The record gives the reactivity of an RNA of 207 nucleotides to 2A3 and DMS.
For DMS the reverse transcriptase was MarathonRT.
The reactions ran in a buffer of 150 mM KOAc, 10 mM MgCl2 and 150 mM bicine (pH 8.5), at 24 C.
The data come from the RNA Mapping Database (RMDB), library M2RFPK.
RNA sequence: GGGAACGACUCGAGUAGAGUCGAAAAGGGCCAUGUACCUAUCCAAAAUGAGAUCCCAACUUGCACACUGUGCUAAUUUGAGAUUCUCAUGCCUCCUACUUGGAGAGAUCUGGACUAGAAGUCAGGGAAUAGGUCGUUUCUUUCGAGAAACGACCAAUGACAUUAAUCUCUUCGGAGAUUAAUGUCAAAAAGAAACAACAACAACAAC
Reactivity to 2A3 in 0.01 (KOAc 150mM, MgCl2 10mM, bicine 150mM(pH8.5), 24C), signal-to-noise 5, nucleotides 027 to 156: g030g010g010c030c040a090u120g050u080a060c000c010u040a060u080c020c030a070a010a040a060u010g000a000g000a000u010c000c000c010a000a000c030u000u020g010c000a020c040a090c210u300g000u000g020c040u130a040a050u020u010u020g020a040g000a030u300u060c000u000c010a000u040g020c000c010u010c000c010u130a260c110u150u210g000g000a010g000a010g000a050u040c030u070g010g030a020c020u040a050g030a160a010g110u080c040a030g000g040g050a040a140u100a170g010g000u000c000g000u000u000u000c010u030u050u080c140g080a030g000a010a000a000c000g000a000c000c000a000a000
Reactivity to DMS in 0.01 (KOAc 150mM, MgCl2 10mM, bicine 150mM(pH8.5), 24C), signal-to-noise 2, nucleotides 027 to 156: g030g020g020c010c030a080u000g020u000a060c050c020u000a090u000c020c030a030a070a150a060u010g000a040g000a070u000c020c010c010a030a030c120u010u000g000c010a020c020a160c130u000g000u000g000c030u000a000a030u000u000u000g010a030g020a050u000u010c020u000c000a010u000g000c060c040u000c050c040u000a130c150u000u000g000g020a070g000a080g000a060u000c070u000g030g010a070c040u000a060g020a080a160g030u000c020a040g010g000g000a080a130u000a110g000g030u000c010g010u000u010u000c000u000u000u000c300g010a050g010a020a010a020c000g010a000c000c000a000a030